[RMDB]
An RNA of 177 nucleotides, treated with 2A3 and DMS and read out base by base. The RNA was probed in 150 mM KOAc, 10 mM MgCl2 and 150 mM bicine (pH 8.5) at 24 C. For DMS, 1,611 sequencing reads were counted.
RNA sequence: GGGAACGACUCGAGUAGAGUCGAAAAGAUAUGGAAACCGUGACUUCAACAGCUCGGAAACGAGACAUGAAGCCACGUGUUUCCUAAGUCAAACUGCUGUAAACUUGUUCGCAAGUUUACAGCAGAAUCGUACUUUGAACUUCGGUUCAAAGUACGAAAAAGAAACAACAACAACAAC
Reactivity to 2A3 in 0.01 (KOAc 150mM, MgCl2 10mM, bicine 150mM(pH8.5), 24C), signal-to-noise 1, nucleotides 027 to 126: g000a000u080a000u120g020g000a020a010a010c000c000g000u010g020a010c010u030u000c020a070a080c040a210g030c010u020c000g000g000a040a090a050c030g010a010g000a050c040a100u130g010a020a000g010c000c000a010c000g030u040g000u000u010u030c000c000u000a000a010g030u010c070a030a090a120c020u000g000c010u000g000u000a010a000a000c000u050u020g000u150u170c300g000c140a000a000g000u000u000u000a010c000a000g000c000a000g010a000a000
Reactivity to DMS in 0.01 (KOAc 150mM, MgCl2 10mM, bicine 150mM(pH8.5), 24C), signal-to-noise 2, nucleotides 027 to 126: g000a020u010a300u010g020g000a000a000a010c000c000g020u000g000a000c000u000u000c000a020a070c250a160g000c010u000c010g000g000a040a100a160c000g020a010g000a040c080a130u000g010a000a000g010c000c010a000c000g000u010g000u000u000u000c000c000u020a010a090g010u000c010a150a130a170c010u000g000c000u000g000u000a000a010a000c000u000u000g010u000u010c230g020c020a000a000g010u010u000u000a000c000a040g000c000a000g000a000a040

It was measured as part of the RMDB library TTRDEL.